About this RNA: An RNA of 207 nucleotides, treated with 2A3 and DMS and read out base by base. The data come from the RNA Mapping Database (RMDB), library OK3TST. For 2A3, 4,510 sequencing reads were counted. Conditions: 150 mM KOAc, 10 mM MgCl2 and 150 mM bicine (pH 8.5), 24 C. The DMS profile rests on 4,473 reads. Reactivities are rounded to 0.1 and cut off at 0 and 3.
[RMDB]
RNA sequence: GGGAACGACUCGAGUAGAGUCGAAAAUAAGCCAGCAACGGAGGACAACCAAGUACGUUGUCAUCUCCAUAGUGGGCUGGUAAUUAUACUCCAGUCCAUCUGAAGCAGCCUCAUUGUCUGGGGUGAUAACCAAGGUUCACUGUCUCAUGGCCAGGGACGAAUAAUACGAGUUCGCUCGUAUUAUUCGAAAAGAAACAACAACAACAAC
Reactivity to 2A3 in 0.01 (KOAc 150mM, MgCl2 10mM, bicine 150mM(pH8.5), 24C), signal-to-noise 5, nucleotides 027 to 156: u130a030a000g050c020c010a010g030c030a060a060c070g010g000a000g000g020a010c000a010a010c040c020a140a120g180u180a140c120g000u010u010g010u020c010a130u060c010u000c010c000a000u020a020g030u020g000g020g000c000u000g000g000u000a010a000u170u160a070u090a060c050u000c010c000a010g000u000c000c000a030u050c070u090g070a100a020g010c050a010g010c010c000u030c030a070u060u150g120u070c080u050g000g000g000g040u050g040a030u060a060a010c030c030a060a030g050g000u080u110c040a030c100u060g020u030c010u020c050a100u120g010g010c030c030a030g000g000g040a010
Reactivity to DMS in 0.01 (KOAc 150mM, MgCl2 10mM, bicine 150mM(pH8.5), 24C), signal-to-noise 2, nucleotides 027 to 156: u010a090a140g020c010c010a110g000c070a080a120c070g030g030a080g020g000a070c010a030a050c020c030a110a270g050u000a100c140g000u020u020g000u000c020a070u010c020u000c000c010a100u010a080g030u010g030g000g020c000u000g000g030u010a050a130u000u000a160u000a160c100u000c000c000a010g040u000c040c010a030u000c050u000g020a060a130g020c050a120g020c040c020u010c040a090u000u000g010u000c060u000g000g000g030g010u000g000a080u000a090a070c020c050a060a080g010g000u020u000c050a150c020u000g010u000c030u010c050a100u010g010g010c050c020a090g040g000g000a140